[RMDB]
RNA sequence: GGGAACGACUCGAGUAGAGUCGAAAAUAGAUCCAUGCUGUCCUAGUCUUUUGACUAGGCUCUUUUGAGCGACAGCCGGAUGUCGAUCUGCUCCAAGACAUCCGGAGCAGAUUUUGGAUCUAGAAAAGGGUGGCAGCAUGUUCGCAUGCUGUUACCCAAAAGAAACAACAACAACAAC
Reactivity to DMS in 0.01 (KOAc 150mM, MgCl2 10mM, bicine 150mM(pH8.5), 24C), signal-to-noise 9, nucleotides 027 to 126: u000a000g000a000u000c000c000a020u010g000c010u000g000u030c280c020u000a000g000u000c000u010u040u020u030g010a010c000u000a010g000g010c020u000c000u010u010u020u050g010a030g000c090g010a100c150a110g010c010c050g000g000a050u010g010u010c020g010a090u010c070u010g020c050u000c030c040a110a180g000a040c100a040u000c050c030g010g000a030g010c010a020g000a020u000u000u000u000g000g000a000u000c000u000a020g010a060a070a110a130
Reactivity to 2A3 in 0.01 (KOAc 150mM, MgCl2 10mM, bicine 150mM(pH8.5), 24C), signal-to-noise 9, nucleotides 027 to 126: u040a000g000a000u000c000c000a010u020g000c010u020g040u080c010c000u010a010g000u000c030u030u300u160u300g000a000c000u000a010g010g000c000u000c000u000u070u050u250g020a010g000c050g070a060c050a050g060c010c010g030g020a050u040g040u030c010g030a100u040c050u180g070c040u060c060c030a080a030g050a040c010a030u020c030c020g000g000a000g000c000a000g000a020u190u210u000u020g000g000a000u000c000u000a010g070a020a110a010a020